This 207-nucleotide RNA was probed chemically with 2A3. 2A3 adducts were read by reverse transcription with SuperScript II with manganese. The 2A3 profile rests on 432 reads. The RNA was probed in 150 mM KOAc, 10 mM MgCl2 and 150 mM bicine (pH 8.5) at 24 C.
RNA sequence: GGGAACGACUCGAGUAGAGUCGAAAAAUCACGGUUUUUGAGGACGCAUUUUGUCCGUGCGGUAAUGCCCUCCUUUACACUUUCUCGCAUGGUGCGGGAGUGUGGAGAGGAAACAAAAGCUAGUCUCGAUAGGCGGUUAACUUCGGUUAACCGCCAACCCUACCAGCUGGUUCGCCAGCUGGUAGGGAAAAGAAACAACAACAACAAC
Reactivity to 2A3 in 0.01 (KOAc 150mM, MgCl2 10mM, bicine 150mM(pH8.5), 24C), signal-to-noise 1, nucleotides 027 to 156: a000u000c000a050c060g010g000u000u000u000u000u000g100a100g010g010a020c040g010c110a140u000u050u000u000g000u130c050c020g000u010g000c020g100g130u200a070a080u270g020c010c000c010u000c030c000u050u140u000a020c000a000c000u060u220u050c000u010c000g000c010a080u160g300g000u240g180c000g000g000g040a000g000u010g000u030g100g000a080g030a040g020g000a000a200a000c000a000a000a000a000g050c030u060a070g060u030c020u070c060g090a090u090a240g010g020c000g030g000u010u000a000a000c020u020u060c100g060g040u040u000a000a000c030c000g000c000c000a000a010
It was measured as part of the RMDB library M2RFOK.